[RMDB]
Chemical mapping of a 177-nucleotide RNA with DMS. High DMS reactivity at an A or C suggests that its Watson-Crick edge is free. For DMS the reverse transcriptase was MarathonRT. The reactions ran in a buffer of 150 mM KOAc, 10 mM MgCl2 and 150 mM bicine (pH 8.5), at 24 C.
RNA sequence: GGGAACGACUCGAGUAGAGUCGAAAAAAAAAGAUAUGGACCUAACUACCCACCUACUAUAGCCGUUGAAAGGCAUCGGAAACGAUGCCUGGAGGCUUAUAGUAGAGGUUAGGUCCUAAGUCAAAAACUAUAUGGAUAACUUCGGUUAUCCAUAUAGAAAAGAAACAACAACAACAAC
Reactivity to DMS in 0.01 (KOAc 150mM, MgCl2 10mM, bicine 150mM(pH8.5), 24C), signal-to-noise 3, nucleotides 027 to 126: a030a080a120a060a080g000a110u000a220u020g000g000a010c000c000u000a020a010c000u000a090c000c010c030a300c100c000u010a000c000u000a000u000a040g010c010c010g020u020u010g000a200a090a020g010g000c000a000u000c010g030g010a070a080a130c000g020a010u000g010c000c000u010g000g010a050g010g000c000u010u020a000u000a010g000u000a020g000a070g000g000u000u010a000g000g020u000c000c000u000a000a060g010u020c110a070a140a140a110a140